[RMDB]
RNA sequence: GGGAACGACUCGAGUAGAGUCGAAAAGAUAUGGAAGUGUUGCUUUUGACGAGCUAAGGGUCGGAAACGACCCGAAGCUCGAUAAGCACCACUUCCUAAGUCAAAGUAGCGGCUUCGGCCGCUACAAUCAGAAACUAUAGUUCGCUAUAGUUUCUGAAAAAGAAACAACAACAACAAC
Reactivity to DMS in 0.01 (KOAc 150mM, MgCl2 10mM, bicine 150mM(pH8.5), 24C), signal-to-noise 3, nucleotides 027 to 126: g000a070u000a300u010g000g020a000a010g020u000g020u000u000g000c000u000u000u010u010g010a140c130g000a030g000c010u000a050a300g000g000g010u010c000g000g010a070a070a220c000g000a010c010c000c000g010a080a080g010c000u000c000g000a040u000a010a020g000c000a000c050c010a000c000u000u000c000c010u000a000a060g000u000c030a100a150a170g030u000a000g010c000g010g020c020u000u020c230g010g010c000c020g000c010u000a000c020a040a100
Reactivity to 2A3 in 0.01 (KOAc 150mM, MgCl2 10mM, bicine 150mM(pH8.5), 24C), signal-to-noise 2, nucleotides 027 to 126: g010a020u070a040u140g000g000a010a010g000u020g000u030u000g010c030u120u120u120u210g300a230c070g000a020g010c000u020a040a060g000g010g020u000c030g000g020a120a030a040c010g020a000c000c050c000g000a000a000g000c000u000c000g000a010u000a000a000g000c000a000c000c010a000c000u000u000c000c000u000a020a000g010u020c030a080a080a210g010u010a010g010c000g030g000c010u090u100c300g160g000c000c000g000c020u000a000c000a000a020